RNA sequence: GGGAACGACUCGAGUAGAGUCGAAAAGACCUUCAGUUCGCUGAAGGUCGAUGAUGGUAAGUGAGAUUACCAUCUGUUAAGUGAUAUGGAUAAGAUCUCUCAGUGAACGUGCUUUCGAGCACGUUAAGAAAAUGCUUCGAUUCGUCGAAGCAUUUUCAAAAGAAACAACAACAACAAC
Reactivity to DMS in 0.01 (KOAc 150mM, MgCl2 10mM, bicine 150mM(pH8.5), 24C), signal-to-noise 3, nucleotides 027 to 126: g010a010c000c010u010u000c000a020g020u000u020c240g030c010u000g000a020a010g000g010u000c000g000a010u010g010a020u010g020g010u010a000a040g000u000g020a180g020a300u000u000a010c000c000a000u000c010u020g000u020u010a060a120g010u000g000a050u010a050u010g020g010a120u000a100a110g000a130u000c020u000c010u010c070a160g030u000g010a030a010c000g010u010g000c000u000u000u000c230g010a000g010c010a000c000g010u000u000a030a090
Reactivity to 2A3 in 0.01 (KOAc 150mM, MgCl2 10mM, bicine 150mM(pH8.5), 24C), signal-to-noise 2, nucleotides 027 to 126: g010a000c000c000u000u000c020a030g000u050u120c160g000c120u010g010a010a000g000g010u010c000g000a000u060g000a000u000g010g000u030a050a030g030u010g120a120g000a160u000u000a000c000c000a010u010c010u030g110u090u180a140a090g060u040g080a070u060a060u240g160g030a060u090a160a090g070a080u000c030u000c010u020c070a080g070u040g280a020a000c000g010u010g000c010u020u080u100c180g040a000g010c000a010c020g010u020u020a010a000